[RMDB]
RNA sequence: GGGAACGACUCGAGUAGAGUCGAAAACCGGACCCUAAAAUAUUCAGGUAGCAUGACGGAAGCUAUGAAUUAAUCCUGGUGGAGGGGUGUGUUCAGUUUGAGGGAGGAUGAUAAAAUGGAACGGAGACUAUUUCUACCUCUUCGGAGGUAGAAAUAGAAAAGAAACAACAACAACAAC
Reactivity to DMS in 0.01 (KOAc 150mM, MgCl2 10mM, bicine 150mM(pH8.5), 24C), signal-to-noise 1, nucleotides 027 to 126: c030c020g010g000a110c030c020c010u000a150a020a150a080u030a070u030u000c020a050g010g030u000a040g010c010a110u000g010a090c130g000g010a120a110g010c030u000a040u010g040a080a040u000u010a150a050u000c030c030u000g000g020u010g000g000a080g010g000g000g010u000g010u010g010u000u000c050a090g000u000u000u020g000a050g000g010g000a050g000g010a080u010g010a170u010a010a050a050a100u000g010g000a070a040c120g000g020a130g010a100